[RMDB]
RNA sequence: GGGAACGACUCGAGUAGAGUCGAAAAGAUAUGGAUCGAAGGUCGAGGUAGACUUCCCUCGGAAACGAGCAGUCUACUACCCACCGACCCGAUCCUAAGUCAAAAGAUUACUGUUCGCAGUAAUCAACAGGAUCUGUAUGUUCGCAUACAGAUCCUGAAAAGAAACAACAACAACAAC
Reactivity to 2A3 in 0.01 (KOAc 150mM, MgCl2 10mM, bicine 150mM(pH8.5), 24C), signal-to-noise 1, nucleotides 027 to 126: g020a020u070a040u110g020g000a010u000c030g130a300a140g000g000u000c020g000a020g020g040u020a010g000a000c000u040u040c040c000c010u000c030g000g010a060a030a040c010g000a010g040c110a000g060u010c000u000a010c000u010a000c080c070c010a080c000c000g010a000c000c000c000g020a000u000c000c000u040a250a040g030u050c010a020a000a000a280g000a000u000u000a030c000u010g040u110u120c300g000c160a010g000u010a010a000u020c000a000a020
Reactivity to DMS in 0.01 (KOAc 150mM, MgCl2 10mM, bicine 150mM(pH8.5), 24C), signal-to-noise 2, nucleotides 027 to 126: g040a010u020a300u000g010g010a000u000c000g010a200a170g000g000u000c010g000a090g010g000u000a010g000a060c010u000u000c130c180c020u010c000g000g010a080a070a150c000g020a010g080c150a030g000u000c010u040a020c000u010a090c080c030c080a300c140c010g010a020c060c000c020g010a000u000c000c000u000a030a140g020u030c010a120a110a120a020g020a000u000u010a000c000u020g010u010u010c230g010c010a020g040u000a030a010u000c000a110a140
The record gives the reactivity of an RNA of 177 nucleotides to 2A3 and DMS. The data come from the RNA Mapping Database (RMDB), library TTRDEL. The RNA was probed in 150 mM KOAc, 10 mM MgCl2 and 150 mM bicine (pH 8.5) at 24 C. The DMS profile rests on 1,040 reads. For DMS the reverse transcriptase was MarathonRT. Reactivities are given for positions 27 through 126.